The record gives the reactivity of an RNA of 207 nucleotides to 2A3. For 2A3, 1,152 sequencing reads were counted. Conditions: 150 mM KOAc, 10 mM MgCl2 and 150 mM bicine (pH 8.5), 24 C.

RNA sequence: GGGAACGACUCGAGUAGAGUCGAAAAGCGUACUACUUAGCAUGUUUGGCUAUGAAGGUGGUUGUCAGUGGUCCCAAAUAGGACCACUUGGAUUUACCACUGGAGCCAAAUUUGCUAAGUAUCGCAAAAGGAUGGCAUUCUUCGGAAUGCCAUCCAACAUGUCAGCAUCGUUCGCGAUGCUGACAUGAAAAGAAACAACAACAACAAC
Reactivity to 2A3 in 0.01 (KOAc 150mM, MgCl2 10mM, bicine 150mM(pH8.5), 24C), signal-to-noise 2, nucleotides 027 to 156: g000c040g040u190a060c090u000a000c000u030u000a010g000c000a000u040g000u030u000u000g020g000c010u120a300u300g070a040a010g030g010u000g000g010u000u050g030u010c000a000g000u000g000g000u000c000c000c000a160a120a030u300a040g000g000a000c000c030a000c020u010u050g030g010a010u200u050u240a020c010c000a020c020u030g030g000a000g000c000c000a000a000a000u010u010u000g000c000u030a000a000g000u000a000u030c000g000c000a000a110a060a000g020g020a000u000g000g020c010a000u000u000c020u100u130c300g100g010a000a000u000g000c010c000a000u000c000c000a000a000